An RNA of 177 nucleotides, treated with DMS and 2A3 and read out base by base.
For 2A3, 8,992 sequencing reads were counted.
The data come from the RNA Mapping Database (RMDB), library OK1LIB.
[RMDB]
RNA sequence: GGGAACGACUCGAGUAGAGUCGAAAAUCAACAAGGCUUCACAUACAUAAAAAGAACAUGUGGAGACAAAAUGAUGAGAGUUAUACCAUGCAAUCUAAUGGACUCCGUCAAGACCCUGACUGGUCCCCAUCUCUAGCGUUUUCGAACGCUAGAGAUGAAAAGAAACAACAACAACAAC
Reactivity to DMS in 0.01 (KOAc 150mM, MgCl2 10mM, bicine 150mM(pH8.5), 24C), signal-to-noise 4, nucleotides 027 to 126: u040c080a050a150c240a100a080g000g000c010u010u000c010a050c010a040u000a120c080a080u050a090a100a120a100a150g000a100a110c160a000u010g000u000g030g000a010g010a090c160a080a050a120a100u050g000a010u000g000a110g000a050g010u010u020a240u030a130c040c010a020u000g010c250a080a150u010c160u010a060a030u000g000g010a130c030u020c000c000g000u000c000a020a080g000a100c080c010c000u000g000a100c160u000g000g010u010c000c020c030
Reactivity to 2A3 in 0.01 (KOAc 150mM, MgCl2 10mM, bicine 150mM(pH8.5), 24C), signal-to-noise 9, nucleotides 027 to 126: u090c010a000a110c050a100a030g050g000c000u010u010c010a010c010a010u140a050c020a040u300a160a220a080a060a040g140a090a050c070a060u010g000u000g000g020a010g050a030c030a000a120a010a030u080g020a000u030g040a080g010a010g190u140u110a200u080a190c010c000a010u060g040c060a140a220u110c090u300a080a040u050g000g010a030c000u000c000c000g010u010c000a000a030g070a080c010c000c000u020g050a050c050u050g040g050u030c010c000c000